The data come from the RNA Mapping Database (RMDB), library RFMREP. The record gives the reactivity of an RNA of 177 nucleotides to 2A3 and DMS.
[RMDB]
RNA sequence: GGGAACGACUCGAGUAGAGUCGAAAACGCGAAUGUUCGCAUUCGCGAAAAGGCAACACGAACGGUCGUUCGGUCAAUGAGUAAGUCCCCCAUUUCAGGGGAAAAGGCGGGAACUUCGGUUCCCGCCGUUAUAGCCUCUCUUCGGAGAGGCUAUAACAAAAGAAACAACAACAACAAC
Reactivity to 2A3 in 0.01 (KOAc 150mM, MgCl2 10mM, bicine 150mM(pH8.5), 24C), signal-to-noise 2, nucleotides 027 to 126: c000g030c000g030a000a010u040g010u070u070c190g010c080a010u010u000c010g000c000g000a000a030a000a010g000g020c010a000a000c010a000c010g040a180a020c000g040g000u010c040g000u020u010c010g000g030u110c040a070a110u170g090a080g250u110a120a040g170u080c070c010c010c000c010a020u040u110u090c040a000g010g040g060g020a010a080a010a040g000g000c030g050g010g000a020a000c020u060u060c260g020g000u000u010c000c010c040g000c000c000
Reactivity to DMS in 0.01 (KOAc 150mM, MgCl2 10mM, bicine 150mM(pH8.5), 24C), signal-to-noise 2, nucleotides 027 to 126: c000g000c000g010a020a000u000g020u000u000c180g050c000a000u000u000c000g050c010g010a000a030a150a240g000g000c020a000a230c160a020c020g000a080a170c300g000g010u000c020g010u000u010c000g040g000u000c070a100a090u010g010a070g010u000a110a100g000u000c000c010c000c000c050a130u010u010u010c270a080g020g000g010g010a010a030a080a070g000g000c000g010g000g000a000a000c000u000u020c170g010g000u000u000c000c000c000g030c000c030

DMS adducts were read by reverse transcription with MarathonRT. For 2A3, 1,363 sequencing reads were counted.